[RMDB]
An RNA of 207 nucleotides, treated with 2A3 and read out base by base.
RNA sequence: GGGAACGACUCGAGUAGAGUCGAAAAAAACAAACAAACAAACAAAAACAUGCUCAUGAGAAGAAGCAGACAGAUGUGGUCAGCCCAGGCCUGAACACAUUGGUCUCCAGUCUGGGAGAGACAGAGCCUCUCUAUCUAAAGAAAAGCAUUCUCAGGGGAUCCCCUGAGAAUUCGUUCUCAGGGGAUCAAAAGAAACAACAACAACAAC
Reactivity to 2A3 in 0.01 (KOAc 150mM, MgCl2 10mM, bicine 150mM(pH8.5), 24C), signal-to-noise 1, nucleotides 027 to 156: a000a000a000c100a040a110a000c080a030a080a020c020a020a040a010c020a000a070a040a010a000c050a070u070g000c000u000c030a100u060g000a010g030a030a000g020a080a000g010c060a000g000a000c000a030g020a030u030g000u010g000g080u020c010a020g000c030c070c030a050g050g020c000c000u010g010a040a000c010a000c000a030u020u120g030g010u010c000u000c050c050a070g030u000c020u070g050g000g000a020g010a000g010a000c040a030g070a020g050c030c020u000c030u030c000u020a040u210c030u110a060a130a050g060a020a090a080a000g000c030a010u070u100c010u050c020a000g070g000g000
Reactivities are rounded to 0.1 and cut off at 0 and 3.